[RMDB]
RNA sequence: GGGAACGACUCGAGUAGAGUCGAAAAAGAUAUGGAGGCUGAACUACGGAUUACAAAGGGACUUGGAUUUAGCGAUCGGAAACGAUCGCUUGUCAGUCCCAUAAAGAUCCGCAGCCUCCUAAGUCAAGUACAUAAAAGACUUCGGUCUUUUAUGUACAAAAGAAACAACAACAACAAC
Reactivity to DMS in 0.01 (KOAc 150mM, MgCl2 10mM, bicine 150mM(pH8.5), 24C), signal-to-noise 3, nucleotides 027 to 126: a060g000a030u010a300u000g010g010a030g010g020c010u010g000a090a070c190u010a300c040g000g000a020u000u010a060c220a070a120a290g020g000g000a010c010u000u020g030g000a030u000u010u010a010g020c000g000a000u000c020g010g010a060a120a160c010g000a000u000c000g020c000u000u000g000u000c000a040g000u000c000c000c010a020u010a040a120a170g000a000u000c000c000g000c000a000g000c010c000u010c000c000u000a000a070g010u020c020a110a190
Reactivity to 2A3 in 0.01 (KOAc 150mM, MgCl2 10mM, bicine 150mM(pH8.5), 24C), signal-to-noise 2, nucleotides 027 to 126: a000g080a020u070a080u170g000g010a000g000g020c000u010g030a120a080c060u240a060c300g000g000a010u040u020a090c140a150a130a130g040g000g000a000c020u170u270g220g040a070u300u290u080a010g010c040g020a010u020c000g060g000a070a000a020c010g000a000u000c030g000c000u000u000g000u000c000a000g000u000c000c000c000a000u010a000a010a010g000a000u000c000c010g000c020a000g000c000c000u000c000c000u000a020a000g010u000c000a020a140